[RMDB]
RNA sequence: GGGAACGACUCGAGUAGAGUCGAAAAUAAGAAGUAUUAUGCUCAAUUAAGGAACAUAGCUAGUUCGACAUACCAUACUACCCUUUUUAAAACUAUCCUAUAUGUUUGAUGCUAGCAUAGCGUAAUUCGCAAUAACCUAUUUCGAUAGGUUAUUGCGAAAAGAAACAACAACAACAAC
Reactivity to 2A3 in 0.01 (KOAc 150mM, MgCl2 10mM, bicine 150mM(pH8.5), 24C), signal-to-noise 4, nucleotides 027 to 126: u250a050a030g080a030a000g080u080a040u180u050a030u110g020c000u010c080a110a080u180u100a080a070g140g000a050a070c040a080u110a110g030c020u060a010g020u030u050c000g010a000c000a020u040a010c020c040a060u050a110c020u090a090c000c000c000u040u070u040u120u250a060a120a060a060c080u070a070u090c010c020u090a070u000a010u290g080u050u050u170g070a080u120g040c000u000a020g060c020a100u040a010g040c030g020u080a000a130u020u030
Reactivity to DMS in 0.01 (KOAc 150mM, MgCl2 10mM, bicine 150mM(pH8.5), 24C), signal-to-noise 1, nucleotides 027 to 126: u030a070a050g010a040a090g000u000a170u010u000a030u010g000c010u000c050a170a080u070u050a070a110g040g010a050a020c030a050u000a040g000c010u010a050g000u000u000c000g040a030c010a080u010a040c130c070a110u000a060c050u010a080c070c010c130u000u020u030u020u030a000a030a060a110c060u010a130u000c020c020u010a110u000a050u000g000u000u000u000g000a040u010g100c020u000a040g000c050a090u000a040g030c010g030u000a040a060u010u010